[RMDB]
RNA sequence: GGGAACGACUCGAGUAGAGUCGAAAAGUGCCAUCUCCGGUGAGCGCUGGGGGCUCUCCUCCCUGUGCUGCCACUCUGGGCCCUGCACUAAGGGUCUGGGCAAGCUAUAGAAUAGCUGCCGCAAGCUGGUCCUGUGUUCCAAAGCUCUGGGAAGAAACAAAUACGAAUUGUUCGCAAUUCGUAUUUGAAAAGAAACAACAACAACAAC
Reactivity to 2A3 in 0.01 (KOAc 150mM, MgCl2 10mM, bicine 150mM(pH8.5), 24C), signal-to-noise 3, nucleotides 027 to 156: g030u020g020c000c010a090u030c070u010c060c050g040g010u080g110a050g010c040g010c040u030g010g010g010g020g000c050u050c030u060c060c010u040c000c010c030u040g030u050g000c020u030g010c010c010a040c020u100c080u060g000g000g020c000c010c030u060g000c120a120c090u080a030a040g010g000g010u000c010u030g020g020g000c080a130a050g000c010u030a020u050a140g190a270a090u010a030g080c000u010g010c020c020g030c060a010a040g010c030u030g020g010u060c000c010u040g020u020g050u070u010c010c000a080a070a020g010c020u050c090u130g010g000g100a090a070g040a070a140a000
Reactivity to DMS in 0.01 (KOAc 150mM, MgCl2 10mM, bicine 150mM(pH8.5), 24C), signal-to-noise 3, nucleotides 027 to 156: g000u000g030c010c030a090u000c060u020c050c050g010g010u000g010a160g040c050g040c040u020g000g010g000g000g020c110u000c150u010c080c010u010c030c000c020u010g020u000g040c010u010g000c050c020a060c020u000c030u020g030g020g000c030c020c010u030g000c180a130c120u000a080a070g030g040g030u010c010u000g020g010g020c020a070a060g050c030u010a110u010a110g010a060a300u000a050g010c020u000g030c010c010g030c100a070a070g020c020u000g020g000u010c040c010u000g000u000g000u030u000c030c030a060a080a150g000c020u010c060u020g000g000g010a110a120g000a110a140a150
Chemical mapping of a 207-nucleotide RNA with 2A3 and DMS. It was measured as part of the RMDB library OK3TST. The 2A3 profile rests on 2,719 reads. The RNA was probed in 150 mM KOAc, 10 mM MgCl2 and 150 mM bicine (pH 8.5) at 24 C. The DMS profile rests on 3,221 reads. Values are in units of 0.01, from 0 to 300, in steps of 10.